The record gives the reactivity of an RNA of 177 nucleotides to DMS and 2A3. The DMS profile rests on 4,062 reads. 2A3 adducts were read by reverse transcription with SuperScript II with manganese. Values cover nucleotides 27 to 126. The RNA was probed in 150 mM KOAc, 10 mM MgCl2 and 150 mM bicine (pH 8.5) at 24 C.
RNA sequence: GGGAACGACUCGAGUAGAGUCGAAAAGAUAUGGAUAUCCUCAAAGCGUUGAAAGAAAUCGGAAACGAUUUCUGGAGCUUUGAGGAGUAUCCUAAGUCAAAUCACUACCACUUCGGUGGUAGUGAAAGAAUACCUUGUUCUUCGGAACAAGGUAUUCAAAAGAAACAACAACAACAAC
Reactivity to DMS in 0.01 (KOAc 150mM, MgCl2 10mM, bicine 150mM(pH8.5), 24C), signal-to-noise 3, nucleotides 027 to 126: g010a050u000a300u000g000g000a020u000a050u000c010c000u000c000a000a020a000g010c000g020u010u020g010a240a140a020g010a010a010a010u000c000g010g000a110a120a200c000g010a010u000u000u010c000u010g010g000a060g000c000u000u000u000g010a010g000g000a020g010u000a000u000c000c000u010a040a120g010u000c040a140a130a200u000c000a010c000u000a000c000c000a010c000u000u020c270g030g010u000g010g000u020a000g010u000g000a000a060a090
Reactivity to 2A3 in 0.01 (KOAc 150mM, MgCl2 10mM, bicine 150mM(pH8.5), 24C), signal-to-noise 2, nucleotides 027 to 126: g000a020u070a020u120g000g010a020u020a060u050c010c000u000c000a010a020a000g020c050g300u300u080g010a030a000a030g000a000a010a000u010c010g000g060a060a040a060c010g000a000u000u010u000c000u000g030g000a010g020c010u000u020u020g010a000g000g010a000g000u010a000u000c000c000u000a140a010g020u010c060a090a040a160u030c000a000c000u000a000c000c000a030c020u070u090c300g170g000u000g000g000u000a000g000u020g000a010a000a010